[RMDB]
RNA sequence: GGGAACGACUCGAGUAGAGUCGAAAACUGGUGCUCGUUGUCUAAGCUCUUGGAUUCGGAGGACAUGCUGUUGUAGAGAAGCGUAUGGAUGUAGUACAUGGCAAGGUUGACCUUGGUGGAGAACUCUAGGAACUUCUCCACGAAUUCGCGCUCGACGGAAAGAGUCCAAAUUCGUUUGGACUCUUUCAAAAGAAACAACAACAACAAC
Reactivity to DMS in 0.01 (KOAc 150mM, MgCl2 10mM, bicine 150mM(pH8.5), 24C), signal-to-noise 1, nucleotides 027 to 156: c080u020g020g020u000g020c000u000c090g060u000u000g010u000c020u000a090a070g040c030u000c020u000u030g000g010a180u000u000c050g050g010a140g030g020a080c060a110u010g020c020u000g060u000u000g040u000a100g010a130g000a070a070g000c080g050u000a070u020g020g020a050u000g030u010a040g010u000a080c040a100u000g020g000c010a080a050g020g030u020u010g000a050c040c040u000u000g040g060u010g010g010a080g040a020a050c050u010c080u010a170g010g000a100a100c120u000u010c010u000c000c030a030c040g000a060a080u010u000c020g030c050g000c060u010c010g020a080c140g020
Reactivity to 2A3 in 0.01 (KOAc 150mM, MgCl2 10mM, bicine 150mM(pH8.5), 24C), signal-to-noise 1, nucleotides 027 to 156: c070u050g000g020u090g000c000u010c080g060u020u020g070u010c090u080a030a080g000c010u020c040u050u070g060g020a100u070u040c010g000g000a050g000g040a030c000a060u070g000c030u010g030u130u010g080u060a050g010a020g030a110a010g000c060g000u090a040u050g000g070a040u020g030u050a020g010u020a040c080a160u110g030g000c020a000a040g020g050u050u040g060a090c000c020u050u070g060g000u000g010g010a010g010a010a040c080u030c110u270a100g120g070a050a060c000u020u000c000u000c050c000a000c000g030a040a090u070u110c060g010c000g000c050u040c040g000a000c000g060